An RNA of 207 nucleotides, treated with DMS and 2A3 and read out base by base. For 2A3, 1,499 sequencing reads were counted. For DMS, 4,380 sequencing reads were counted. For 2A3 the reverse transcriptase was SuperScript II with manganese.
RNA sequence: GGGAACGACUCGAGUAGAGUCGAAAACUCUUGUUAGGUGACAGUUGAUGGUCGCCGUGUCAGUCCAUGCCUUUGAAAACAGUUCUAUGUAGUAGGGAGUCGAGAACCUAUGAGAGUUAGAACUUGCUAUGCCUUGGACUCUUCGGAGUCCAAGGAAGCACAACAGAAUGUUCGCAUUCUGUUGUGCAAAAGAAACAACAACAACAAC
Reactivity to DMS in 0.01 (KOAc 150mM, MgCl2 10mM, bicine 150mM(pH8.5), 24C), signal-to-noise 2, nucleotides 027 to 156: c050u000c130u000u000g010u000u000a060g050g030u000g010a080c010a150g010u000u000g000a150u000g020g000u000c000g030c020c010g020u000g020u000c070a100g030u000c040c060a070u010g010c000c000u000u020u000g000a070a100a090a030c060a050g010u000u000c030u000a050u000g010u000a300g050u000a040g010g020g000a150g010u000c130g000a300g000a110a110c000c000u000a000u000g000a300g030a200g000u000u000a010g000a040a040c010u000u010g050c010u000a130u000g000c010c000u020u010g020g010a040c000u000c010u020u010c300g040g030a040g010u000c000c000a000a000g000g000a000a030
Reactivity to 2A3 in 0.01 (KOAc 150mM, MgCl2 10mM, bicine 150mM(pH8.5), 24C), signal-to-noise 3, nucleotides 027 to 156: c020u030c000u070u090g090u110u160a070g000g050u020g020a020c030a070g040u110u050g160a130u120g050g000u020c000g020c010c010g020u010g030u020c030a010g060u020c050c010a040u070g030c010c050u090u150u170g140a080a070a010a020c050a010g000u020u020c040u040a030u090g040u010a030g000u000a000g000g040g030a050g020u040c020g060a020g000a180a030c000c000u020a020u040g050a120g000a010g060u050u010a010g010a010a020c000u030u040g010c020u070a070u180g040c000c000u010u000g000g000a000c000u020c000u060u000c150g080g010a000g000u000c000c000a000a000g000g000a000a000